[RMDB]
RNA sequence: GGGAACGACUCGAGUAGAGUCGAAAAAGAGAGAGGAGAAUCCCCAUGACGCUGGAAGAGACUUCCGGGUAACCAAGUCAAGGAGAAGGAACGGUAGAAAAGAGCGAGCCUCUCGAUACGAAAGGGCCUAAUAGCUACUGUUCGCAGUAGCUAUUAGAAAAGAAACAACAACAACAAC
Reactivity to DMS in 0.01 (KOAc 150mM, MgCl2 10mM, bicine 150mM(pH8.5), 24C), signal-to-noise 4, nucleotides 027 to 126: a090g000a220g010a010g000a030g000g010a150g020a170a150u000c030c000c010c080a190u000g020a080c020g000c040u010g010g000a100a060g000a190g010a100c060u000u000c040c040g020g020g010u020a100a140c120c090a020a100g010u000c050a080a110g020g020a070g000a110a080g000g000a060a090c100g000g000u010a050g000a060a060a090a150g000a080g020c030g000a130g020c030c000u000c010u010c020g000a140u000a070c130g010a030a070a050g000g000g020c180
Reactivity to 2A3 in 0.01 (KOAc 150mM, MgCl2 10mM, bicine 150mM(pH8.5), 24C), signal-to-noise 2, nucleotides 027 to 126: a000g100a020g010a010g020a020g010g020a080g050a120a170u020c000c000c030c000a070u040g000a000c020g010c080u030g020g040a070a000g060a040g050a190c010u010u020c020c000g000g010g050u070a040a040c020c000a050a000g020u010c010a030a070g070g000a050g020a120a010g050g000a120a040c060g050g070u110a020g120a090a140a040a000g040a010g000c030g000a010g010c000c000u000c000u000c030g000a070u070a120c020g010a090a000a030g050g000g020c000